The record gives the reactivity of an RNA of 177 nucleotides to 2A3. The reactions ran in a buffer of 150 mM KOAc, 10 mM MgCl2 and 150 mM bicine (pH 8.5), at 24 C. The 2A3 profile rests on 521 reads.
RNA sequence: GGGAACGACUCGAGUAGAGUCGAAAAAGGAUAGCGCCUGGCAACAGGCGACCUGGCAUUGGUUACGGGAGGAGGGCGCCCGGUUUUAUCAGGCGCUUUGUCAGCUCCCCCUGCUGACGGUUUAUCCCACUGCUGGCGUGUUCGCACGCCAGCAGUGAAAAGAAACAACAACAACAAC
Reactivity to 2A3 in 0.01 (KOAc 150mM, MgCl2 10mM, bicine 150mM(pH8.5), 24C), signal-to-noise 1, nucleotides 027 to 126: a000g190g000a140u140a050g060c010g010c010c060u020g070g000c000a050a000c000a090g020g040c000g000a000c000c000u000g010g000c030a130u090u230g020g080u220u300a180c090g110g000g000a070g000g000a020g000g050g000c020g020c040c040c010g010g010u030u180u060u020a130u070c000a000g010g000c000g000c000u020u020u050g220u070c040a060g060c000u060c050c000c000c000c000u010g000c000u000g090a000c030g020g000u150u160u100a050u010c000c000